[RMDB]
RNA sequence: GGGAACGACUCGAGUAGAGUCGAAAAAACGCGAAAGUCGGACGGCGGCCAUGAGUCGCAACGCAAAGCCGCGGCAAGUGGAGUUAGCGAGAAUAGACUAGGCUUUGGUUUCUUCAAGUGAAGCGGUAAAAGGUUCGAGACUUCGGUCUCGAACCAACAUCAGAAACGUGUUCGCACGUUUCUGAUGAAAAGAAACAACAACAACAAC
Reactivity to 2A3 in 0.01 (KOAc 150mM, MgCl2 10mM, bicine 150mM(pH8.5), 24C), signal-to-noise 2, nucleotides 027 to 156: a010a000c070g030c020g080a150a150a000g070u110c050g060g030a100c070g050g000c010g030g000c020c000a160u150g010a030g020u030c010g000c020a070a040c020g000c110a080a060a070g010c050c020g000c000g030g010c070a010a040g010u080g040g050a130g010u160u120a050g040c030g030a010g060a050a080u090a020g040a050c060u020a030g000g000c000u030u030u020g030g030u020u010u020c020u120u040c040a040a010g030u050g050a060a000g010c010g000g030u130a050a020a050a080g010g010u010u000c000g000a000g030a000c000u000u060c140g070g000u000c000u020c000g000a000a000c000c000a000a000
Reactivity to DMS in 0.01 (KOAc 150mM, MgCl2 10mM, bicine 150mM(pH8.5), 24C), signal-to-noise 1, nucleotides 027 to 156: a000a070c110g000c000g030a140a030a060g030u010c020g010g020a080c080g040g030c010g000g000c000c060a120u000g000a300g000u000c010g030c000a040a000c020g000c030a130a160a140g050c030c010g050c070g000g020c080a010a250g000u000g000g000a090g040u010u010a080g030c000g040a130g010a110a130u000a120g040a060c040u000a080g010g010c040u000u000u000g010g010u000u010u000c030u000u000c020a060a100g010u000g020a080a050g030c010g000g010u000a020a090a140a070g020g000u000u000c010g010a040g000a060c010u000u000c300g060g000u000c000u000c000g010a000a000c000c000a060a060